This 207-nucleotide RNA was probed chemically with 2A3 and DMS. For 2A3, 3,272 sequencing reads were counted. The DMS profile rests on 6,900 reads. Reactivities are given for positions 27 through 156. For DMS the reverse transcriptase was MarathonRT.
[RMDB]
RNA sequence: GGGAACGACUCGAGUAGAGUCGAAAAAAUGCCGCCUCAGUUCCAAGCUCUUUCGUGGCACUCUAAACAGUCCUAUUGAGUUAGGGGCAGUCAACCACGUUGCGAAGCUAAAUUAUCUGGUCGAGAGUUACGAUUCCCUACUUCGGUAGGGAAUCAAUACGUUACUACGAUUCGUCGUAGUAACGUAAAAAGAAACAACAACAACAAC
Reactivity to 2A3 in 0.01 (KOAc 150mM, MgCl2 10mM, bicine 150mM(pH8.5), 24C), signal-to-noise 4, nucleotides 027 to 156: a000a030u090g040c050c020g000c010c000u060c050a040g010u100u020c010c000a050a030g000c020u020c020u020u040u060c040g030u050g010g020c090a030c020u070c030u090a110a170a070c050a080g050u040c000c030u060a100u060u100g100a090g110u060u070a060g010g000g040g000c010a020g040u040c010a010a040c010c000a020c040g030u040u030g010c050g090a090a030g000c030u080a060a080a070u120u150a080u090c060u050g010g020u050c040g030a010g000a000g170u060u110a050c080g010a010u000u000c000c000c000u000a000c000u000u050c130g080g000u000a000g000g000g000a000a000u000c000a000a000
Reactivity to DMS in 0.01 (KOAc 150mM, MgCl2 10mM, bicine 150mM(pH8.5), 24C), signal-to-noise 3, nucleotides 027 to 156: a030a040u010g020c040c010g030c030c030u000c020a130g000u010u000c040c040a170a230g000c020u000c000u000u000u000c050g050u010g010g020c080a060c030u000c050u000a090a080a090c090a130g010u010c020c010u010a090u000u020g020a200g010u000u000a070g030g010g020g000c060a060g020u000c020a050a080c020c030a070c070g020u000u000g010c050g010a100a120g020c090u010a050a040a080u010u020a050u000c060u000g040g020u010c030g020a150g010a110g010u000u000a100c090g000a030u000u000c010c010c000u000a010c000u000u010c290g050g050u010a020g010g020g010a010a000u000c010a040a200